[RMDB]
RNA sequence: GGGAACGACUCGAGUAGAGUCGAAAAAUCUUUAUCAAUCCACAUAUUCACAUACUGAAUAUUAGGAUGCGCCAUUCUGAUCUUGUAUUCGCCGUGAUCGCCAGAAUCGGCAUUGAAACAAUAUACCUUGCAUCCCUUAAUUGCCCACGGCAAGCCCGUGUAGGAGGAGGUUCGCCUCCUCCUACACAAAAGAAACAACAACAACAAC
Reactivity to 2A3 in 0.01 (KOAc 150mM, MgCl2 10mM, bicine 150mM(pH8.5), 24C), signal-to-noise 2, nucleotides 027 to 156: a010u090c110u140u140u110a110u120c060a060a030u020c030c010a050c050a070u020a010u010u010c000a020c080a200u250a200c070u070g000a020a010u040a010u060u040a110g000g000a010u010g020c000g020c030c000a020u070u000c010u060g040a080u040c010u130u160g030u140a100u050u110c020g020c050c000g000u000g020a040u080c050g090c020c010a010g030a030a020u040c120g000g040c050a020u000u140g040a050a090a000c070a080a020u050a000u040a240c000c100u020u060g040c010a060u120c010c020c000u070u120a080a020u200u110g060c020c020c030a010c010g010g000c010a000a050g040c010c000c050